Source: RMDB library OK3TST, as collected in RNAgym.
An RNA of 207 nucleotides, treated with DMS and 2A3 and read out base by base.
The 2A3 profile rests on 3,278 reads.
For DMS the reverse transcriptase was MarathonRT.
For DMS, 4,856 sequencing reads were counted.
[RMDB]
RNA sequence: GGGAACGACUCGAGUAGAGUCGAAAAAUAUCGCAAAGCGUUACUUCCAGUGGGCAGAAGAGAACGCAAUCAAGGCGGCGGAGACGGCGACGUUUCAGGGCGACGUUAACGAGUGGGGAGUGAACAAGCCGCGCAUUUUCACGCUCACAGGGUUAAGCAAGUAUAUGGACUUCGGUCCAUAUACUUGAAAAGAAACAACAACAACAAC
Reactivity to DMS in 0.01 (KOAc 150mM, MgCl2 10mM, bicine 150mM(pH8.5), 24C), signal-to-noise 3, nucleotides 027 to 156: a090u000a060u000c010g030c050a100a080a150g010c020g010u000u000a120c000u000u000c010c020a150g040u000g010g010g040c070a210g000a010a020g000a150g010a040a010c030g020c020a110a060u010c060a070a120g010g050c020g000g000c040g040g000a100g010a030c050g000g000c070g010a050c040g010u000u020u010c130a130g030g010g030c050g010a040c050g010u010u000a080a150c070g020a090g030u000g010g000g010g020a110g000u000g010a020a080c060a060a150g030c000c010g000c040g040c110a070u000u010u000u000c040a090c120g020c010u010c010a060c020a080g020g030g040u000u010a040a110g010
Reactivity to 2A3 in 0.01 (KOAc 150mM, MgCl2 10mM, bicine 150mM(pH8.5), 24C), signal-to-noise 4, nucleotides 027 to 156: a000u110a020u050c050g010c130a090a080a030g020c010g000u020u020a030c010u030u000c010c020a050g010u050g010g030g000c020a000g020a030a000g110a030g030a020a020c020g000c030a000a020u070c050a020a020g130g000c020g020g010c040g030g010a060g010a030c060g000g030c020g010a030c030g020u010u040u170c080a050g030g020g000c040g010a030c040g000u030u100a070a050c040g010a020g020u060g000g020g000g000a090g020u050g010a040a030c060a080a000g010c000c020g020c020g010c010a010u010u000u060u120c070a060c080g010c000u020c000a020c010a010g100g000g020u070u050a050a020g080

Values cover nucleotides 27 to 156.